The record gives the reactivity of an RNA of 207 nucleotides to 2A3 and DMS. Reactivities are given for positions 27 through 156. The DMS profile rests on 2,051 reads. Conditions: 150 mM KOAc, 10 mM MgCl2 and 150 mM bicine (pH 8.5), 24 C.

RNA sequence: GGGAACGACUCGAGUAGAGUCGAAAAGGGGUCUCCUACCAGCGUCACCCAGGAGCUUGGAUUUACUGAAGCCUCCACGGUUGUCAGCUCCUGACAAGUCGCUGAAGGAGACGGAGGCACCCAAAGCUACUCUCUAGGUUCGCCUAGAGAGUAGCAAUCAGAGUGAUUACUUCGGUAAUCACUCUGAAAAAGAAACAACAACAACAAC
Reactivity to 2A3 in 0.01 (KOAc 150mM, MgCl2 10mM, bicine 150mM(pH8.5), 24C), signal-to-noise 2, nucleotides 027 to 156: g020g000g030g010u010c010u010c010c000u050a190c080c010a020g000c000g050u070c070a170c060c100c000a020g000g000a010g000c020u170u230g230g050a290u300u300u290a120c010u030g020a070a010g020c010c000u010c050c040a030c030g040g040u090u170g100u140c030a000g000c000u000c000c000u000g000a060c060a170a270g010u060c000g000c000u000g010a010a010g040g010a000g010a020c010g000g000a000g000g000c010a100c000c010c020a090a020a000g000c000u000a000c000u010c000u000c000u000a000g030g030u060u120c200g090c050c000u000a000g000a010g010a000g010u000a010g000c000a000a000
Reactivity to DMS in 0.01 (KOAc 150mM, MgCl2 10mM, bicine 150mM(pH8.5), 24C), signal-to-noise 1, nucleotides 027 to 156: g020g000g090g020u000c020u000c040c000u000a190c090c010a000g010c010g000u020c020a100c080c110c050a070g020g000a060g090c020u000u010g050g000a110u000u000u000a140c030u020g000a060a130g020c020c020u000c010c010a260c090g020g010u010u000g010u000c020a100g020c020u020c020c000u030g010a080c050a040a140g050u000c000g050c000u000g000a090a060g020g000a100g010a010c020g040g040a020g010g010c040a130c010c000c010a100a080a190g020c000u000a000c000u000c000u010c000u010a010g000g020u050u010c300g020c000c000u000a030g000a020g020a040g000u010a000g000c000a000a040